[RMDB]
RNA sequence: GGGAACGACUCGAGUAGAGUCGAAAAAUACAAGGGGAGGUUUCGGCCAAAUGUUGUAUGCAGAAAGCGUGAGGAAGGUAGCACUUAGACACUUACGAGUAGCGGUUCGGCAGUAGUGCUAAAAUGAGACAGUACGAAAAGUUCGCUUUUCGUACAACUCAUACACGAGGUUCGCCUCGUGUAUGAGAAAAGAAACAACAACAACAAC
Reactivity to 2A3 in 0.01 (KOAc 150mM, MgCl2 10mM, bicine 150mM(pH8.5), 24C), signal-to-noise 2, nucleotides 027 to 156: a000u200a060c030a010a040g000g020g000g020a030g060g000u030u050u080c050g030g040c010c020a000a120a080u050g000u050u020g000u040a080u050g010c030a000g040a060a050a010g010c020g010u030g020a010g020g030a020a040g030g000u030a010g000c020a010c040u080u060a010g040a040c020a030c090u060u110a070c040g030a000g060u020a020g020c010g050g020u070u050c010g050g000c020a030g020u060a000g010u040g040c030u080a010a000a010a140u060g000a030g010a040c070a110g010u000a000c000g000a000a000a000a000g010u020u050c190g070c080u020u000u000u000c000g000u000a000c000a000a000
Reactivity to DMS in 0.01 (KOAc 150mM, MgCl2 10mM, bicine 150mM(pH8.5), 24C), signal-to-noise 1, nucleotides 027 to 156: a100u000a040c050a000a030g040g010g000g010a150g050g010u000u000u000c090g010g020c070c050a060a060a140u010g000u000u000g000u000a060u010g020c040a120g010a070a050a120g000c050g050u000g030a070g000g010a060a040g040g030u000a040g000c030a090c060u000u000a070g010a090c140a090c040u000u010a060c100g000a070g000u000a060g020c020g000g020u000u010c040g010g000c060a150g020u000a000g000u000g010c010u000a050a030a020a090u010g010a200g020a150c020a120g000u000a010c000g010a000a020a020a000g050u000u000c300g020c010u020u000u000u020c020g020u000a000c040a030a070